[RMDB]
RNA sequence: GGGAACGACUCGAGUAGAGUCGAAAACAAGCUCGAGCGGAAGUAGGUGCGAGGAUUUACCUUAGAACAGACCCGAGCCGCCUGAGAGAAGAGCGUCAGACUGCUCGCUAGAACGAUUAGAGUUACGUUCCUCCACAGCAUCGUGGCUGAACUUAACCAUUCGUCCUACAUUCGUGUAGGACGAAUGAAAAGAAACAACAACAACAAC
Reactivity to DMS in 0.01 (KOAc 150mM, MgCl2 10mM, bicine 150mM(pH8.5), 24C), signal-to-noise 1, nucleotides 027 to 156: c040a100a270g060c020u000c010g000a000g000c000g000g030a130a080g000u010a030g000g100u010g020c020g020a130g010g000a300u000u020u010a100c010c040u000u000a100g000a020a090c110a160g000a060c000c030c000g030a130g030c000c030g000c000c050u000g060a060g020a140g020a160a140g020a080g000c000g010u010c040a070g000a060c060u040g010c060u010c060g000c010u000a050g020a030a050c030g010a130u020u000a100g000a100g020u000u000a040c060g000u000u000c010c000u000c110c050a180c060a090g000c100a140u000c070g030u030g000g040c100u000g030a140a110c030u000u000a020a100c120
Reactivity to 2A3 in 0.01 (KOAc 150mM, MgCl2 10mM, bicine 150mM(pH8.5), 24C), signal-to-noise 4, nucleotides 027 to 156: c050a050a000g040c010u020c030g030a020g010c020g020g020a080a040g080u210a070g010g050u090g040c020g020a040g070g020a040u100u140u300a240c020c000u050u050a090g060a180a050c050a040g070a080c000c000c000g000a010g030c010c000g000c010c000u040g010a040g010a000g030a150a030g030a010g040c050g040u030c010a020g030a090c050u060g000c010u020c010g000c050u110a060g030a130a050c080g040a080u080u130a080g050a020g080u020u040a040c030g000u000u000c000c000u000c010c010a010c000a040g110c030a150u150c180g010u050g010g000c000u010g040a040a040c010u040u060a000a020c000